[RMDB]
About this RNA:
Structure probing data (2A3) for a 207-nucleotide construct. Source: RMDB library OK3TST, as collected in RNAgym. Values cover nucleotides 27 to 156. Conditions: 150 mM KOAc, 10 mM MgCl2 and 150 mM bicine (pH 8.5), 24 C.
RNA sequence: GGGAACGACUCGAGUAGAGUCGAAAAGGCAGCGGCUACUACGUUCCCCAUCGGAUUCUGUUCGAAGACCGGGAGGAUAAACGGGAGUACAACCUCGGAACCCCACAGAUUCGAGGGGAUGGAAGCGGGGAACCGAUCGGCUCGUGGGUCUUCGCUGCUAUUGUUAGGCGUUCGCGCCUAACAAUAGAAAAGAAACAACAACAACAAC
Reactivity to 2A3 in 0.01 (KOAc 150mM, MgCl2 10mM, bicine 150mM(pH8.5), 24C), signal-to-noise 1, nucleotides 027 to 156: g090g010c050a050g050c060g060g000c000u090a080c020u030a040c020g040u020u010c000c000c000c000a190u050c010g000g030a100u170u030c010u040g050u180u170c070g030a050a000g030a060c000c020g080g000g010a150g070g040a090u120a080a130a010c050g000g050g000a090g110u130a050c050a160a090c060c030u000c000g090g000a070a070c010c010c010c010a020c000a090g120a050u020u020c030g040a030g000g040g010g070a000u000g050g030a100a010g050c040g000g040g010g010a040a060c000c000g070a130u210c020g070g040c010u000c030g020u140g010g040g040u000c110u000u030c040g040c100u010g020